[RMDB]
RNA sequence: GGGAACGACUCGAGUAGAGUCGAAAAAUCUGGUAGUCACUCAAGUGGAUCAUGGUCAUCAGGUGGUGGUAGUGGUUCAUCAUCAGGAGGUCAAUCAAGUGGAUCUUGGUCUUCAGGAGGUGGUUCAGCUACUACCUGAGUUCGCUCAGGUAGUAGCAAAAGAAACAACAACAACAAC
Reactivity to DMS in 0.01 (KOAc 150mM, MgCl2 10mM, bicine 150mM(pH8.5), 24C), signal-to-noise 2, nucleotides 027 to 126: a090u010c060u000g020g020u010a040g000u000c050a090c060u000c090a100a070g030u000g000g000a080u020c040a060u000g020g020u020c030a060u000c060a100g030g030u000g020g020u010g000g040u000a090g010u000g030g000u010u010c030a040u010c110a050u000c070a110g000g000a100g010g000u000c040a090a050u010c100a070a090g020u010g000g020a080u000c040u000u000g000g000u000c040u000u000c000a050g010g010a060g010g010u000g000g010u000u000c090a110
Reactivity to 2A3 in 0.01 (KOAc 150mM, MgCl2 10mM, bicine 150mM(pH8.5), 24C), signal-to-noise 2, nucleotides 027 to 126: a000u050c030u030g080g040u090a050g040u020c020a050c060u090c050a140a100g070u050g080g030a010u040c040a040u060g090g030u040c010a030u020c070a090g110g000u070g050g000u010g030g020u130a070g050u030g070g000u070u060c010a000u000c000a010u000c000a000g030g070a020g020g050u060c050a030a070u050c050a160a020g080u060g090g060a060u020c000u000u030g000g010u040c000u030u020c020a030g070g000a030g000g020u030g010g000u000u080c010a010